[RMDB]
RNA sequence: GGGAACGACUCGAGUAGAGUCGAAAAGAGGCGGGGUUAACCCAUACUAUGGGAACUGCUGGGUUCCUCGGAUGUCGAUCCCCUCUCCCGUUCGGGAAAAGGGGGACUCCGGAACUCCCUGCAGGUUGAGGUCUCAGCUUCGGCUGAGACAAAAGAAACAACAACAACAAC
Reactivity to 2A3 in 0.01 (KOAc 150mM, MgCl2 10mM, bicine 150mM(pH8.5), 24C), signal-to-noise 5, nucleotides 027 to 129: g000a030g030g030c060g010g020g000g040u050u100a120a060c020c000c000a000u100a090c160u150a090u100g000g000g020a030a050c030u010g000c000u000g000g000g000u040u030c020c010u030c010g000g010a060u260g050u030c040g110a160u100c020c000c000c000u000c000u000c000c010c010g100u300u300c220g020g000g000a020a050a040a000g010g000g000g000g000a000c000u000c000c000g000g020a010a010c050u080c020c010c010u040g000c000a000g000g000u040u080g060a010g020
Reactivity to DMS in 0.01 (KOAc 150mM, MgCl2 10mM, bicine 150mM(pH8.5), 24C), signal-to-noise 4, nucleotides 027 to 129: g020a050g000g000c080g000g000g000g000u040u050a050a100c000c030c030a030u040a150c110u030a010u030g020g020g030a100a140c030u010g050c060u000g010g010g020u000u000c040c060u030c000g000g040a040u070g030u010c040g020a030u070c000c000c020c080u050c110u000c000c000c010g040u070u090c180g020g010g050a000a000a000a000g020g060g050g020g040a010c010u030c020c000g010g050a100a030c110u000c000c010c010u010g010c000a020g020g020u000u000g000a110g030
Conditions: 150 mM KOAc, 10 mM MgCl2 and 150 mM bicine (pH 8.5), 24 C. An RNA of 170 nucleotides, treated with 2A3 and DMS and read out base by base. The DMS profile rests on 16,491 reads. The 2A3 profile rests on 8,266 reads. For 2A3 the reverse transcriptase was SuperScript II with manganese.